Source: RMDB library OK1LIB, as collected in RNAgym. Chemical mapping of a 177-nucleotide RNA with 2A3 and DMS.

[RMDB]
RNA sequence: GGGAACGACUCGAGUAGAGUCGAAAAAAAAGAACGAACGGAUCUUGUAGGAUUCCCAAGAAAUUCUUCGAUUUCUUCCGGAAACAGAUGAUUAAUCAUCUGCUUCUCACGUUCCGUGAAUAGCCGGGCAGAUACCUUUAUUCGUAAAGGUAUCUGCAAAAGAAACAACAACAACAAC
Reactivity to 2A3 in 0.01 (KOAc 150mM, MgCl2 10mM, bicine 150mM(pH8.5), 24C), signal-to-noise 7, nucleotides 027 to 126: a000a000a000a020g110a040a020c070g020a030a010c020g020g010a040u020c010u060u120g080u190a080g050g030a110u100u050c020c010c000a010a000g040a010a050a010u150u080c090u080u100c110g100a100u020u020u030c010u080u020c050c010g040g000a020a010a000c010a000g010a000u010g000a020u100u280a140a180u150c020a000u000c000u000g000c010u050u010c040u020c030a060c030g040u110u010c030c030g020u010g030a040a040u080a070g090c040c020g010g050
Reactivity to DMS in 0.01 (KOAc 150mM, MgCl2 10mM, bicine 150mM(pH8.5), 24C), signal-to-noise 3, nucleotides 027 to 126: a060a050a040a040g000a030a100c050g010a200a060c030g000g000a020u010c030u000u000g020u020a130g000g000a160u010u010c020c000c030a050a040g000a040a040a050u000u020c090u010u010c150g020a050u000u000u010c010u000u000c060c080g000g000a040a110a060c020a000g010a010u000g000a040u020u040a110a060u010c000a000u000c010u000g020c060u000u010c030u000c110a120c040g000u000u010c030c010g010u000g020a080a070u020a070g030c070c020g000g020

Reactivities are given for positions 27 through 126. 2A3 adducts were read by reverse transcription with SuperScript II with manganese.